Structure probing data (DMS and 2A3) for a 170-nucleotide construct. For 2A3 the reverse transcriptase was SuperScript II with manganese. DMS adducts were read by reverse transcription with MarathonRT. DMS (dimethyl sulfate) methylates the pairing face of unpaired adenines and cytosines. Conditions: 150 mM KOAc, 10 mM MgCl2 and 150 mM bicine (pH 8.5), 24 C.

[RMDB]
RNA sequence: GGGAACGACUCGAGUAGAGUCGAAAAGGACGAAUCCGCCCCCGGGCGCUCCCCUCGGACUUCCUCCAGGAGGGUUCACAUCCCCAACCCGCGGGCCGGCUACUCUUCUUUCCCUUCUCUCGUCUUCCAGCGCAAACCUUCGGGUUUGCGAAAAGAAACAACAACAACAAC
Reactivity to DMS in 0.01 (KOAc 150mM, MgCl2 10mM, bicine 150mM(pH8.5), 24C), signal-to-noise 2, nucleotides 027 to 129: g020g010a050c080g000a110a130u050c030c090g030c000c000c000c000c000g040g020g000c240g120c080u040c070c000c000c020u020c080g130g000a080c110u070u040c140c090u040c060c080a240g030g000a100g030g000g030u050u040c080a090c120a080u020c090c010c070c010a000a180c000c000c050g060c180g060g000g000c060c120g090g000c110u030a030c070u000c020u090u000c030u000u000u000c030c030c070u010u000c030u020c000u040c010g050u010c000u010u050c020c070a100g050
Reactivity to 2A3 in 0.01 (KOAc 150mM, MgCl2 10mM, bicine 150mM(pH8.5), 24C), signal-to-noise 3, nucleotides 027 to 129: g030g000a000c020g060a020a070u000c000c000g000c010c000c010c000c010g010g000g020c060g030c050u080c000c020c000c000u010c010g010g040a070c050u190u030c030c010u010c010c000a090g010g060a040g000g040g070u030u020c100a040c040a150u140c000c000c000c000a000a020c000c010c000g000c050g020g020g040c040c000g040g000c000u040a050c010u010c000u030u060c000u000u050u020c000c010c000u060u030c030u000c010u020c010g030u000c050u080u000c060c010a020g000